The data come from the RNA Mapping Database (RMDB), library OK1LIB. An RNA of 177 nucleotides, treated with 2A3 and DMS and read out base by base.

RNA sequence: GGGAACGACUCGAGUAGAGUCGAAAACGAGGAGUACAUCAUGUCCACGAUACAUUACACCAACACAUAUUUGAUAUGUGUAAAGAUGGUCGUAUGUUGGUGAUCAUCUCGUGGAUGGUGUAUUCAGGCGUCUCGUUGAUUUCGAUCAAUGAGGUGCAAAAGAAACAACAACAACAAC
Reactivity to 2A3 in 0.01 (KOAc 150mM, MgCl2 10mM, bicine 150mM(pH8.5), 24C), signal-to-noise 9, nucleotides 027 to 126: c070g040a060g190g000a000g010u000a000c000a000u010c010a030u140g110u030c000c010a000c000g010a010u060a090c050a150u180u200a060c040a020c030c020a080a010c000a000c000a000u040a050u070u190u300g190a060u040a010u050g020u000g010u020a020a020a010g030a020u020g010g020u010c020g050u180a140u210g110u080u110g040g030u040g010a030u020c010a010u000c000u000c010g000u000g000g000a010u010g000g000u000g000u000a000u000u000c000a000g110
Reactivity to DMS in 0.01 (KOAc 150mM, MgCl2 10mM, bicine 150mM(pH8.5), 24C), signal-to-noise 7, nucleotides 027 to 126: c050g010a140g010g010a020g010u010a010c000a000u000c010a040u030g010u020c000c000a020c000g010a030u020a040c090a110u020u060a060c080a030c000c010a170a050c000a000c000a010u000a020u000u040u040g020a040u000a000u000g000u000g010u000a040a030a050g020a020u000g000g000u000c010g020u040a050u020g000u010u000g000g010u000g000a020u000c020a010u010c110u000c000g020u000g000g010a020u000g000g020u000g000u000a010u000u010c000a120g000
About this RNA:
Conditions: 150 mM KOAc, 10 mM MgCl2 and 150 mM bicine (pH 8.5), 24 C.